[RMDB]
RNA sequence: GGGAACGACUCGAGUAGAGUCGAAAAUUUAGGUUUCAUGUGUACUUGCUAUUUUGGUGUCUUCUCUCUUUUGAACCUUAAGCUUAGAGCACCUAUGGGUGUCUAUGACUUUAAGGUCUCAACACAACUUACUAGUUCCGUUCGCGGAACUAGUAAGAAAAGAAACAACAACAACAAC
Reactivity to DMS in 0.01 (KOAc 150mM, MgCl2 10mM, bicine 150mM(pH8.5), 24C), signal-to-noise 1, nucleotides 027 to 126: u000u000u000a070g010g000u000u000u010c050a090u000g010u020g000u000a040c060u030u000g020c030u020a080u000u000u000u000g030g010u010g010u000c070u000u000c030u000c030u010c080u010u020u010u000g000a030a050c000c000u000u000a010a010g000c010u000u000a000g000a120g040c010a000c010c000u010a150u010g050g030g020u000g000u000c000u000a010u000g000a140c020u020u000u000a000a020g000g000u000c140u000c000a040a070c300a060c240a060a140
Reactivity to 2A3 in 0.01 (KOAc 150mM, MgCl2 10mM, bicine 150mM(pH8.5), 24C), signal-to-noise 2, nucleotides 027 to 126: u080u040u090a070g000g070u020u020u040c030a020u100g020u000g020u100a020c010u020u050g050c000u040a080u150u130u030u080g060g020u050g020u020c000u020u020c060u000c000u020c020u090u060u030u020g020a010a010c000c000u000u020a020a000g000c000u000u000a020g030a040g060c000a000c000c000u020a200u240g180g000g000u020g000u000c000u010a020u000g110a220c000u070u110u050a000a000g010g000u000c010u000c020a000a000c020a000c000a060a100

Chemical mapping of a 177-nucleotide RNA with DMS and 2A3.
Conditions: 150 mM KOAc, 10 mM MgCl2 and 150 mM bicine (pH 8.5), 24 C.
For DMS, 1,265 sequencing reads were counted.
Reactivities are given for positions 27 through 126.
DMS adducts were read by reverse transcription with MarathonRT.